Chemical mapping of a 177-nucleotide RNA with 2A3 and DMS. The 2A3 profile rests on 1,089 reads. DMS adducts were read by reverse transcription with MarathonRT.
[RMDB]
RNA sequence: GGGAACGACUCGAGUAGAGUCGAAAAGGUGUGAGACCACGGCACGUCUUGUACUCGUCUAGUAUGGCUAUCUCCAGGUCCUCCGUUUGCUCGGGCACAAAACGGAACUCCGAGACGGUGGCGGCGGCGUGCAUGCGGGAUUCGUCCCGCAUGCACGAAAAGAAACAACAACAACAAC
Reactivity to 2A3 in 0.01 (KOAc 150mM, MgCl2 10mM, bicine 150mM(pH8.5), 24C), signal-to-noise 2, nucleotides 027 to 126: g010g000u020g050u080g040a060g030a010c050c000a020c040g010g000c060a050c000g030u000c000u100u130g020u030a030c000u000c040g000u000c050u090a030g000u050a130u090g080g000c060u070a070u040c030u070c000c010a000g040g060u020c000c000u020c000c020g010u030u060u110g070c040u020c050g030g000g030c010a000c010a150a090a030a000c060g010g080a030a000c010u000c010c000g040a020g000a030c090g090g000u030g010g000c020g010g000c010g000g000
Reactivity to DMS in 0.01 (KOAc 150mM, MgCl2 10mM, bicine 150mM(pH8.5), 24C), signal-to-noise 1, nucleotides 027 to 126: g010g010u000g000u000g000a010g010a180c000c050a090c080g000g000c000a000c130g000u000c000u040u000g000u040a010c020u030c120g020u000c090u000a090g010u030a030u030g000g000c100u000a130u000c030u000c010c210a100g000g040u000c000c060u000c010c060g000u000u000u010g010c030u000c030g000g000g060c180a150c100a060a000a070a040c210g000g000a130a220c220u030c000c040g000a100g000a020c100g000g000u000g020g000c070g000g000c050g000g020